An RNA of 177 nucleotides, treated with 2A3 and DMS and read out base by base. DMS adducts were read by reverse transcription with MarathonRT. The data come from the RNA Mapping Database (RMDB), libraries RFM100 and RFMREP. Reactivities are rounded to 0.1 and cut off at 0 and 3. Conditions: 150 mM KOAc, 10 mM MgCl2 and 150 mM bicine (pH 8.5), 24 C.
RNA sequence: GGGAACGACUCGAGUAGAGUCGAAAAAAUUCUUUGAUUAGUUGAGGACGAACAAUUGCGAAAGCAUCUGCCAGGGACGUUUCUGUUGAUCAAGAACGAAAGUUAGGGGAUCGAAGAUGAUUAGAUAGCUAAUGAUGCAAUUCGUUGCAUCAUUAGCAAAAGAAACAACAACAACAAC
Reactivity to 2A3 in 0.01 (KOAc 150mM, MgCl2 10mM, bicine 150mM(pH8.5), 24C), signal-to-noise 3, nucleotides 027 to 126: a000a000u100u020c050u070u020u020g050a040u040u120a020g030u010u040g040a030g030g030a010c000g020a090a000c050a100a110u110u080g000c000g070a100a040a040g030c030a020u050c020u110g020c030c040a060g010g000g010a020c000g020u000u060u000c060u000g070u080u020g010a060u080c000a020a040g010a080a030c090g030a080a070a050g070u100u080a050g010g010g000g010a010u090c030g000a050a020g040a070u140g000a010u070u040a030g060a130u060a050
Reactivity to DMS in 0.01 (KOAc 150mM, MgCl2 10mM, bicine 150mM(pH8.5), 24C), signal-to-noise 3, nucleotides 027 to 126: a050a050u040u000c010u000u020u000g040a060u030u020a070g010u020u010g010a060g010g000a080c040g000a040a070c070a060a090u020u000g000c020g000a100a040a100g020c040a060u010c090u000g020c030c070a070g000g000g000a080c060g010u000u010u010c030u010g010u020u000g010a040u010c030a040a050g010a040a040c040g010a070a020a070g000u020u010a090g000g000g010g000a060u020c040g010a060a070g010a060u010g030a100u000u010a110g010a090u000a090